An RNA of 207 nucleotides, treated with 2A3 and read out base by base. Source: RMDB library M2RFOK, as collected in RNAgym. For 2A3, 672 sequencing reads were counted. 2A3 adducts were read by reverse transcription with SuperScript II with manganese. Conditions: 150 mM KOAc, 10 mM MgCl2 and 150 mM bicine (pH 8.5), 24 C.
RNA sequence: GGGAACGACUCGAGUAGAGUCGAAAAUCAGAAUCAGGCCGGGGUGUUUAGCGCUCCGUAAACACGGUCGUACAUCCAGCCGGUAGCCUGGUUCCUUGCAUUGAGUGAUGUACGGAGUUUAUAGAGCAAAAGAAAGACCUGUUCGCAGGUCUUUCAACCUAUAUACCACCUUCGGGUGGUAUAUAGGAAAAGAAACAACAACAACAAC
Reactivity to 2A3 in 0.01 (KOAc 150mM, MgCl2 10mM, bicine 150mM(pH8.5), 24C), signal-to-noise 1, nucleotides 027 to 156: u170c000a030g040a030a000u020c000a010g000g000c020c000g010g020g010g010u030g040u030u080u180a120g130c050g000c020u000c000c030g020u020a000a010a010c130a030c100g070g040u060c020g010u000a000c000a000u020c030c050a030g010c050c010g040g000u060a010g010c000c000u000g020g050u010u010c030c020u060u110g040c030a120u080u080g020a060g030u120g010a010u000g010u010a040c030g000g020a070g000u080u090u020a160u080a040g110a000g040c020a030a000a010a010g010a000a000a000g000a000c000c000u010g050u000u060c070g000c140a010g000g000u010c000u010u000u020c000a000a000